Source: RMDB library OK1LIB, as collected in RNAgym. This 177-nucleotide RNA was probed chemically with DMS and 2A3. The DMS profile rests on 9,044 reads. The RNA was probed in 150 mM KOAc, 10 mM MgCl2 and 150 mM bicine (pH 8.5) at 24 C. 2A3 adducts were read by reverse transcription with SuperScript II with manganese.

RNA sequence: GGGAACGACUCGAGUAGAGUCGAAAAGAGACCUCCCGGACGGGUCGGCUGGCCGGGCGGGGGCUGACCCCCCACCUCCCUCCCGGACGGGGUGGCUGGCCGGGCGGGGGCUGACCCCCCACCUCAAAUUUAGCUAGUAGUUCGCUACUAGCUAAAUAAAAGAAACAACAACAACAAC
Reactivity to DMS in 0.01 (KOAc 150mM, MgCl2 10mM, bicine 150mM(pH8.5), 24C), signal-to-noise 4, nucleotides 027 to 126: g020a130g010a120c030c020u000c010c010c000g010g000a060c020g000g010g030u000c190g000g010c100u000g000g020c100c120g010g000g030c300g020g000g000g000g000c160u040g000a290c060c010c000c020c010c030a170c080c000u000c010c000c020u010c000c010c010g010g010a050c010g000g000g000g030u000g010g020c020u000g000g020c040c000g000g000g000c100g000g010g000g000g000c110u010g030a150c150c010c000c000c010c000a060c040c000u000c090a080a090
Reactivity to 2A3 in 0.01 (KOAc 150mM, MgCl2 10mM, bicine 150mM(pH8.5), 24C), signal-to-noise 3, nucleotides 027 to 126: g130a020g030a110c010c000u040c000c000c000g000g010a030c010g010g000g030u060c010g030g010c050u050g050g030c040c080g020g000g000c090g020g010g000g020g020c040u060g080a240c000c000c000c000c000c000a010c000c010u040c000c000c000u000c010c000c000g020g020a030c020g010g010g010g010u040g010g000c030u030g070g030c020c010g010g020g000c040g000g020g000g020g030c090u130g070a150c020c010c030c000c000c000a060c000c030u090c050a110a170